[RMDB]
RNA sequence: GGGAACGACUCGAGUAGAGUCGAAAAGAUAUGGAGGUGUGGGAGUCUCGAUGUGGGUGACCACGCUAGGCUCGGAAACGAGCCUAGUAUCAACCCACCCGAGACGAAGAACACACCUCCUAAGUCACUAGAAGAAAUGGUUCGCCAUUUCUUCUAGAAAAGAAACAACAACAACAAC
Reactivity to DMS in 0.01 (KOAc 150mM, MgCl2 10mM, bicine 150mM(pH8.5), 24C), signal-to-noise 4, nucleotides 027 to 126: g000a040u010a300u020g010g020a000g010g020u000g000u000g010g020g000a150g020u000c000u000c000g000a050u020g040u000g000g020g010u000g000a170c300c300a070c230g000c010u000a000g000g010c000u010c000g010g000a110a150a290c020g000a010g010c010c000u000a000g020u000a070u010c170a210a040c000c000c000a030c010c260c000g020a040g000a000c010g010a070a120g010a140a230c010a000c000a010c000c000u000c000c000u000a010a080g000u000c050a250
Reactivity to 2A3 in 0.01 (KOAc 150mM, MgCl2 10mM, bicine 150mM(pH8.5), 24C), signal-to-noise 2, nucleotides 027 to 126: g040a020u050a070u190g000g010a000g000g000u010g000u000g010g020g050a070g020u000c010u020c020g060a160u190g000u030g000g020g010u010g030a060c100c070a110c230g000c010u010a000g010g040c000u000c030g000g020a060a110a040c000g000a000g000c020c010u000a000g010u010a000u030c020a060a230c010c000c000a000c000c010c000g000a000g010a010c010g040a300a180g010a040a000c000a000c000a010c010c000u000c000c020u010a010a000g010u000c010a020